Structure probing data (DMS and 2A3) for a 177-nucleotide construct. For DMS, 1,794 sequencing reads were counted. The RNA was probed in 150 mM KOAc, 10 mM MgCl2 and 150 mM bicine (pH 8.5) at 24 C. Reactivities are given for positions 27 through 126. The data come from the RNA Mapping Database (RMDB), library M2PK90. 2A3 adducts were read by reverse transcription with SuperScript II with manganese.
RNA sequence: GGGAACGACUCGAGUAGAGUCGAAAAAACACGUGGGUACGGCCCAGUGGGGGGGAGAGGGACACGCCCUGGGCUCUGCCCAGGGUGCAGCCGGACUGACUGACCCCCUGUGCCGCCCCCAGAUAAACUAUUUGUAAAGUUUCGACUUUACAAAUAGAAAAGAAACAACAACAACAAC
Reactivity to DMS in 0.01 (KOAc 150mM, MgCl2 10mM, bicine 150mM(pH8.5), 24C), signal-to-noise 2, nucleotides 027 to 126: a110a040c050a090c150g030u000g020g010g010u000a050c040g000g010c000c030c000a020g000u000g020g030g000g000g000g010g010a050g000a230g050g020g010a070c070a230c060g000c000c000c010u000g020g000g030c000u030c220u010g040c020c000c010a020g000g000g020u000g000c050a030g020c020c030g020g010a190c130u000g000a170c050u000g010a190c000c000c000c000c000u010g000u000g000c000c000g000c260c070c000c000c010a020g000a100u000a080a090a130
Reactivity to 2A3 in 0.01 (KOAc 150mM, MgCl2 10mM, bicine 150mM(pH8.5), 24C), signal-to-noise 1, nucleotides 027 to 126: a000a000c100a010c090g130u120g000g000g000u040a020c000g000g010c020c020c000a020g050u290g000g010g040g010g010g010g000a070g000a030g000g030g000a000c000a000c020g010c010c020c000u000g040g050g040c090u130c160u300g000c000c000c010a000g070g040g000u000g000c000a000g050c020c010g030g060a040c030u030g050a040c020u040g070a110c010c000c010c000c000u000g000u010g000c000c020g000c020c030c000c000c020a020g030a160u230a080a100a040